[RMDB]
RNA sequence: GGGAACGACUCGAGUAGAGUCGAAAAGCUGCUCACGGGUGACAACGGGCGAGCGGCUUGGCGGGUCGCUCGGAACGCCGGGAUCACCGAUGUGCGAGCCGCAUUGCUGCCCGAGCAGAAGGUUGAACCGUUCCUGUAUGUUCGCAUACAGGAACGGAAAAGAAACAACAACAACAAC
Reactivity to 2A3 in 0.01 (KOAc 150mM, MgCl2 10mM, bicine 150mM(pH8.5), 24C), signal-to-noise 1, nucleotides 027 to 126: g020c000u030g030c000u000c010a040c070g060g000g030u000g040a030c030a060a060c080g000g110g060c010g030a020g010c010g000g000c000u000u020g130g060c100g090g020g020u010c000g000c000u000c000g000g080a160a080c110g120c040c000g030g000g030a110u110c020a010c030c020g070a200u100g070u110g120c090g020a000g000c000c000g010c050a170u030u180g000c020u040g000c010c000c010g000a000g000c010a010g040a120a020g140g000u190u180g050a120a080
Reactivity to DMS in 0.01 (KOAc 150mM, MgCl2 10mM, bicine 150mM(pH8.5), 24C), signal-to-noise 1, nucleotides 027 to 126: g010c020u000g000c000u010c010a060c020g000g010g000u000g010a040c180a070a180c040g000g000g010c060g010a020g020c000g000g010c000u000u010g010g050c170g010g000g040u000c010g000c000u000c010g010g010a070a120c180g000c000c000g000g000g030a220u010c040a040c070c010g010a050u010g000u000g020c040g000a070g000c020c070g010c070a150u010u010g000c020u000g020c000c000c000g000a070g010c000a080g030a080a120g000g040u000u020g000a100a110

This 177-nucleotide RNA was probed chemically with 2A3 and DMS. The 2A3 profile rests on 1,085 reads. The data come from the RNA Mapping Database (RMDB), library OK2TST. Conditions: 150 mM KOAc, 10 mM MgCl2 and 150 mM bicine (pH 8.5), 24 C. For 2A3 the reverse transcriptase was SuperScript II with manganese.